[RMDB]
RNA sequence: GGGAACGACUCGAGUAGAGUCGAAAAGCGGGGCUUGAAACGCGGGUAGCGCGCACGCCCGGCGAAGAAGUUCGCAUACGCGGUGUGCUGGUGCCGAAGUGUCUGCUGCAAAGGCACGCUCGACACCUAGAACAUACCGUAUUCGUACGGUAUGUAACGCUUGCUAUUCUUUCGAGAAUAGCAAGCGAAAAGAAACAACAACAACAAC
Reactivity to 2A3 in 0.01 (KOAc 150mM, MgCl2 10mM, bicine 150mM(pH8.5), 24C), signal-to-noise 1, nucleotides 027 to 156: g040c130g000g050g020g000c020u080u070g060a070a110a010c070g020c020g000g040g080u120a040g100c020g010c010g000c010a030c030g010c000c000c000g000g030c050g000a030a000g070a020a030g140u000u010c020g000c030a000u050a180c100g050c190g080g030u060g000u000g000c000u040g020g010u000g020c020c000g010a010a010g000u010g000u000c010u030g110c010u030g010c090a090a000a040g000g000c000a000c020g010c110u000c020g000a010c000a000c000c000u040a070g010a140a000c010a000u000a000c030c000g020u000a000u000u070c130g100u020a000c000g000g000u000a000u010g000u010a060a040